[RMDB]
RNA sequence: GGGAACGACUCGAGUAGAGUCGAAAAAGACAUACGUUCGCGUAUGUCUGACGGGCACCUGUCCCUAAGGAAAUGCUCUAUGACAGGACACACUGAUUGUGAUACCUCGAGAUUUCGAUCUCGAGAAGAACACCAAGUACUUCGGUACUUGGUGUUCAAAAGAAACAACAACAACAAC
Reactivity to DMS in 0.01 (KOAc 150mM, MgCl2 10mM, bicine 150mM(pH8.5), 24C), signal-to-noise 3, nucleotides 027 to 126: a030g000a020c000a000u000a000c000g030u020u000c220g010c010g040u000a010u000g010u000c030u010g010a090c170g000g000g000c040a060c010c010u000g000u000c010c010c000u010a090a070g000g000a060a050a080u000g000c050u000c030u010a100u030g010a150c110a000g000g000a210c070a040c080a010c130u010g000a090u020u000g000u000g000a180u010a070c180c000u000c000g000a010g020a010u000u000u000c180g010a020u000c000u000c000g030a000g000a040a060
Reactivity to 2A3 in 0.01 (KOAc 150mM, MgCl2 10mM, bicine 150mM(pH8.5), 24C), signal-to-noise 2, nucleotides 027 to 126: a020g010a000c000a000u000a020c000g020u000u060c240g000c010g150u010a000u010g000u000c000u010g010a010c040g010g020g000c010a020c070c010u000g000u010c000c000c030u020a080a060g050g040a010a130a070u110g040c020u030c030u070a120u120g100a030c010a010g060g040a060c020a000c000a010c060u160g210a300u240u110g040u020g010a100u140a120c000c010u000c000g000a010g000a000u000u050u220c230g030a030u000c010u000c000g000a010g000a010a020